[RMDB]
RNA sequence: GGGAACGACUCGAGUAGAGUCGAAAAUCCAUUGCACUUAGGAGGGGUGCUUUCCUAAGGUCUGCCCAAGUGGCAGAGCCUACGUCAUAAUUUGUGGUAGUGGGGGCUUGCGUUCGCGCAGCCCCUUCAUUAAUAUGGAGUUCGCUCCAUAUUAAUGAAAAGAAACAACAACAACAAC
Reactivity to 2A3 in 0.01 (KOAc 150mM, MgCl2 10mM, bicine 150mM(pH8.5), 24C), signal-to-noise 5, nucleotides 027 to 126: u010c010c010a010u030u200g020c040a020c030u040u060a050g010g070a030g000g060g020g040u080g030c000u030u040u010c020c000u050a080a020g020g030u000c000u010g000c000c000c020a300a090g070u270g090g000c000a000g000a010g020c000c000u040a040c040g120u080c070a040u040a280a130u100u110u230g080u070g060g060u050a100g090u180g030g000g000g010g000c040u080u180g000c010g010u010u050c190g000c000g020c070a000g000c000c000c000c000u000u000
Reactivity to DMS in 0.01 (KOAc 150mM, MgCl2 10mM, bicine 150mM(pH8.5), 24C), signal-to-noise 4, nucleotides 027 to 126: u010c020c020a150u010u000g020c060a080c020u000u010a050g010g010a070g010g000g000g020u010g010c030u000u000u000c010c020u010a070a020g000g000u000c010u000g000c000c000c020a130a160g020u020g020g010c010a000g000a030g010c080c020u000a070c150g010u000c080a060u010a120a140u010u000u000g020u000g010g010u000a070g030u000g010g010g010g010g000c010u000u010g050c000g000u000u000c200g040c020g040c000a040g000c000c000c000c000u000u000